[RMDB]
RNA sequence: GGGAACGACUCGAGUAGAGUCGAAAAGAAUUGGUAUGUAAGCUACCACUUCCGGUAGCUGCGUCACACUUUAAGAGUGUGCAUACUGAGCCGAAGCUCAGCUUCGGUCCCCCAAGGGAAGUACAAAACCUAAUCAUGGCUUCGGCCAUGAUUAGGUAAAAGAAACAACAACAACAAC
Reactivity to DMS in 0.01 (KOAc 150mM, MgCl2 10mM, bicine 150mM(pH8.5), 24C), signal-to-noise 2, nucleotides 027 to 126: g000a040a040u010u030g020g010u000a000u010g000u000a300a230g020c000u010a000c000c000a100c030u000u000c020c010g000g000u010a000g000c000u000g000c020g000u000c000a020c000a000c000u000u020u010a120a030g040a000g020u010g000u000g030c000a010u010a000c000u000g020a010g000c030c000g000a000a000g020c000u060c210a110g020c010u000u000c000g010g020u000c040c000c000c120c140a100a100g000g000g000a010a020g020u040a110c220a050a110a100
Reactivity to 2A3 in 0.01 (KOAc 150mM, MgCl2 10mM, bicine 150mM(pH8.5), 24C), signal-to-noise 4, nucleotides 027 to 126: g110a020a100u010u010g010g000u000a000u000g000u010a010a010g000c000u000a010c010c030a070c010u010u000c000c000g000g000u000a000g000c000u000g000c000g000u010c000a000c000a010c020u090u130u270a300a150g190a010g250u000g000u000g000c000a000u000a000c010u030g000a000g000c000c000g010a010a000g000c020u090c300a060g000c010u040u000c010g000g000u010c000c000c010c010c000a030a040g070g000g010a020a000g010u090a050c060a020a080a000
An RNA of 177 nucleotides, treated with DMS and 2A3 and read out base by base. For 2A3 the reverse transcriptase was SuperScript II with manganese. High 2A3 reactivity points to a flexible backbone, as in loops and unpaired stretches. Source: RMDB library OK1LIB, as collected in RNAgym. The reactions ran in a buffer of 150 mM KOAc, 10 mM MgCl2 and 150 mM bicine (pH 8.5), at 24 C.